[RMDB]
RNA sequence: GGGAACGACUCGAGUAGAGUCGAAAAUACGUAGAUGGUGAACAGACAGAAUUUUCUGCUUCUGGACACCUUAGGCUCAGAAGAUUGCUACUUGCGAUGCAAGCGGUGAGUUUUUUGAGGUUUUUUGUAUAAUACACAGCUUCGGCUGUGUAUUAUAAAAAGAAACAACAACAACAAC
Reactivity to DMS in 0.01 (KOAc 150mM, MgCl2 10mM, bicine 150mM(pH8.5), 24C), signal-to-noise 4, nucleotides 027 to 126: u030a080c140g010u040a080g010a100u020g000g000u000g010a040a290c020a000g000a030c010a010g020a050a300u020u030u040u000c000u000g000c120u030u000c000u010g000g000a300c000a000c000c010u010u030a050g000g030c010u000c000a000g000a010a010g000a020u000u000g000c000u000a100c010u000u000g010c020g030a200u040g000c000a000a010g010c030g000g030u000g000a010g000u000u010u000u010u000u000g010a020g000g000u010u000u010u000u010u020g010
Reactivity to 2A3 in 0.01 (KOAc 150mM, MgCl2 10mM, bicine 150mM(pH8.5), 24C), signal-to-noise 3, nucleotides 027 to 126: u250a020c080g100u080a030g010a220u110g040g000u000g000a040a000c010a000g000a000c030a010g040a100a130u180u140u180u050c030u010g090c070u070u000c000u000g020g000a010c000a000c010c000u000u030a060g000g020c000u010c010a000g020a010a010g010a020u010u020g040c010u010a020c000u000u010g000c040g240a100u300g010c000a010a000g010c030g060g020u130g070a070g020u030u000u000u000u020u000g000a040g050g050u030u020u020u010u050u070g010
Overview:
An RNA of 177 nucleotides, treated with DMS and 2A3 and read out base by base.